[RMDB]
RNA sequence: GGGAACGACUCGAGUAGAGUCGAAAACUAGUGCCAUUCGUGGCACUAGAAGGGGUCCAGCCUGGAAAGGCUGGAGGUAUUGGAAUGGUCGGGCCGCGAUUCAAGGUACGCUAUUCGUAGCGUACAAGAUUUUCAUGGGAUUCGUCCCAUGAAAAUCAAAAGAAACAACAACAACAAC
Reactivity to DMS in 0.01 (KOAc 150mM, MgCl2 10mM, bicine 150mM(pH8.5), 24C), signal-to-noise 3, nucleotides 027 to 126: c000u000a000g010u000g000c000c000a040u000u010c210g020u010g000g010c000a000c000u000a000g000a140a070g010g010g000g030u000c010c010a010g020c000c000u000g010g030a090a100a010g000g010c000u000g010g000a000g010g000u000a080u000u000g000g010a090a050u000g000g010u010c060g010g000g010c040c050g000c060g010a080u010u000c080a160a130g010g020u000a000c010g000c000u000a040u000u010c210g010u010a000g000c000g000u000a000c000a090a040
Reactivity to 2A3 in 0.01 (KOAc 150mM, MgCl2 10mM, bicine 150mM(pH8.5), 24C), signal-to-noise 3, nucleotides 027 to 126: c000u000a000g010u000g020c000c000a020u040u040c200g120u060g010g000c000a000c000u000a000g000a010a020g020g020g000g000u000c000c000a000g020c000c010u080g080g100a200a090a020g000g000c000u000g010g060a010g020g000u100a140u060u250g090g050a080a110u080g060g030u060c000g050g010g020c040c010g000c020g020a030u080u060c060a060a040g170g000u000a000c000g020c000u020a030u040u070c200g060u030a000g000c000g000u000a000c010a000a020